The record gives the reactivity of an RNA of 177 nucleotides to DMS and 2A3. Reactivities are given for positions 27 through 126.

RNA sequence: GGGAACGACUCGAGUAGAGUCGAAAAUUAAACCGCGUAGAGAACCAAGCCUUGAAAAGCAGAAAGGGAGAGCUCAAGGCUUGGUUCUAGACUAGUGUCGAGUCGUUCCCACUCCCUUCGCCAAAAACAAACUAAAGUAGUUCGCUACUUUAGUUUGAAAAGAAACAACAACAACAAC
Reactivity to DMS in 0.01 (KOAc 150mM, MgCl2 10mM, bicine 150mM(pH8.5), 24C), signal-to-noise 4, nucleotides 027 to 126: u010u010a080a100a090c070c120g020c120g010u010a130g010a080g000a020a010c000c000a000a020g000c000c010u000u000g000a080a090a110a080g030c040a070g000a080a060a020g000g010g010a030g030a170g010c100u000c010a010a010g010g000c000u000u000g000g010u000u000c010u000a030g000a010c000u010a070g000u010g000u000c000g000a000g010u000c000g000u000u000c000c010c000a020c020u000c000c000c000u010u000c080g000c090c100a030a050a070a070a130
Reactivity to 2A3 in 0.01 (KOAc 150mM, MgCl2 10mM, bicine 150mM(pH8.5), 24C), signal-to-noise 1, nucleotides 027 to 126: u090u030a120a020a050c070c050g050c030g060u080a100g010a010g000a180a000c000c000a020a010g020c010c000u010u000g030a100a100a010a090g040c050a030g120a120a060a000g040g000g000a020g000a010g030c010u000c040a010a010g000g000c000u000u000g000g010u000u000c000u000a010g000a020c010u020a020g100u030g090u140c010g020a000g000u020c000g000u020u000c000c000c000a000c010u000c000c000c010u050u010c060g020c030c000a040a070a010a010a030

The RNA was probed in 150 mM KOAc, 10 mM MgCl2 and 150 mM bicine (pH 8.5) at 24 C.